[RMDB]
RNA sequence: GGGAACGACUCGAGUAGAGUCGAAAAGGAUCAUUCGUGAUCCGGAAAGAUAUGGACCCAUACAUCUAUGAAGCAUAGGAAAUACCAGUCGGAAACGACUGGUACACCUAUGUGGAGAUGUUUGGGUCCUAAGUCACACGUUCCACUUCGGUGGAAAUAUAUGAUGAGGGUUCGCCCUCAUCAUAUAAAAAGAAACAACAACAACAAC
Reactivity to 2A3 in 0.01 (KOAc 150mM, MgCl2 10mM, bicine 150mM(pH8.5), 24C), signal-to-noise 5, nucleotides 027 to 156: g000g000a000u010c010a030u060u280c260g140u050g000a010u000c000c000g000g040a110a080a000g010a010u010a010u050g010g000a000c010c010c010a040u140a070c010a010u000c000u030a300u190g010a010a010g000c000a000u000a000g000g010a090a030a000u010a000c000c000a000g000u000c000g000g000a010a030a060c000g000a000c000u000g000g000u000a000c000a010c000c000u000a000u000g000u000g000g000a010g000a000u000g030u000u050u180g000g010g000u010c000c000u000a000a000g000u000c000a020c000a010c090g090u010u010c000c000a010c000u060u070c200g110g010u030g000g090a000a060a080
Reactivity to DMS in 0.01 (KOAc 150mM, MgCl2 10mM, bicine 150mM(pH8.5), 24C), signal-to-noise 3, nucleotides 027 to 156: g010g010a000u010c000a060u000u010c300g040u010g010a000u010c000c000g010g010a110a060a150g020a090u000a200u000g010g010a030c000c000c010a020u000a010c000a010u000c000u010a160u020g000a210a300g010c000a010u010a000g030g000a140a080a260u000a000c010c000a030g010u000c000g020g010a170a110a220c010g020a020c010u000g020g010u000a000c040a200c000c000u000a000u000g000u000g000g020a010g020a020u000g000u000u000u000g010g010g010u000c010c000u000a000a050g010u000c040a110c060a080c150g010u000u010c000c000a030c020u000u000c250g030g000u000g000g000a010a040a050